[RMDB]
RNA sequence: GGGAACGACUCGAGUAGAGUCGAAAAUGAGCAUAGCGUCCAUCGUCAACGCUGAGCGGAUUACAAAAAUAUCAGUACCGCUACUGUCAACCGGCAUCUAUUCUGGUGGCAAAGAUCGAGUGAUGCAGGCUCAAUCUGAUUUCGAUCAGAUUGAGCCAAAAGAAACAACAACAACAAC
Reactivity to 2A3 in 0.01 (KOAc 150mM, MgCl2 10mM, bicine 150mM(pH8.5), 24C), signal-to-noise 2, nucleotides 027 to 126: u120g000a040g010c060a060u040a070g040c010g070u040c020c010a120u050c020g100u040c030a040a020c050g000c130u030g030a010g000c000g040g000a070u250u000a080c090a010a260a040a030a050u260a040u130c070a030g010u010a040c010c010g000c010u030a060c050u040g020u040c020a100a060c100c030g000g010c060a020u040c040u130a100u210u060c020u080g010g030u030g040g000c050a050a020a090g010a030u090c020g000a000g010u050g000a010u030g020c030a000
Reactivity to DMS in 0.01 (KOAc 150mM, MgCl2 10mM, bicine 150mM(pH8.5), 24C), signal-to-noise 1, nucleotides 027 to 126: u010g010a160g050c090a120u000a030g010c010g030u000c060c020a100u020c120g010u020c040a070a060c160g000c020u020g000a030g000c020g010g000a130u000u000a030c080a060a030a110a080a180u010a060u030c130a070g000u000a040c000c030g000c030u000a110c070u000g010u000c060a040a120c030c010g000g000c100a070u000c120u000a090u000u000c030u000g010g020u000g000g000c060a060a120a150g000a020u000c020g000a130g020u000g000a050u000g010c030a050